[RMDB]
This 177-nucleotide RNA was probed chemically with 2A3 and DMS.

RNA sequence: GGGAACGACUCGAGUAGAGUCGAAAAGCUGAGUAUACGAGGUUAGUUCAUUCUCGUAUGCAUGAUUGGACAAAUUAAAAUCUCAAUUUGGAUCAGGGCCUCCCACCAGCGACGGCCGAACAUACAACUUUGUUAAUUACUUCGGUAAUUAACAAAGAAAAGAAACAACAACAACAAC
Reactivity to 2A3 in 0.01 (KOAc 150mM, MgCl2 10mM, bicine 150mM(pH8.5), 24C), signal-to-noise 5, nucleotides 027 to 126: g000c010u030g020a010g050u020a000u000a000c010g010a000g030g030u110u120a050g080u200u290c070a050u210u040c010u000c000g000u010a010u010g000c000a050u090g010a070u040u090g030g010a010c000a020a030a060u080u130a090a140a150a280u080c070u020c120a020a040u030u020u060g100g010a110u040c040a040g000g110g000c000c000u000c020c000c010a040c020c030a000g000c020g020a030c030g010g010c010c010g020a030a010c020a020u170a030c020a060a040
Reactivity to DMS in 0.01 (KOAc 150mM, MgCl2 10mM, bicine 150mM(pH8.5), 24C), signal-to-noise 7, nucleotides 027 to 126: g020c010u000g010a220g020u000a010u000a010c010g010a020g010g010u020u000a090g010u010u010c170a100u010u000c000u000c010g010u000a000u000g010c020a120u010g010a060u010u000g010g000a080c020a020a020a020u000u000a050a070a110a120u020c160u010c100a030a030u000u000u000g000g010a110u000c020a070g020g010g010c010c010u000c000c000c000a110c110c010a030g000c010g000a100c160g000g010c020c020g000a030a030c080a060u010a130c220a030a080
Annotation:
It was measured as part of the RMDB library M2PK90. DMS adducts were read by reverse transcription with MarathonRT. For DMS, 7,934 sequencing reads were counted. In probing experiments dimethyl sulfate is read out at A N1 and C N3, which are open when not base-paired. 2A3 adducts were read by reverse transcription with SuperScript II with manganese. The reactions ran in a buffer of 150 mM KOAc, 10 mM MgCl2 and 150 mM bicine (pH 8.5), at 24 C.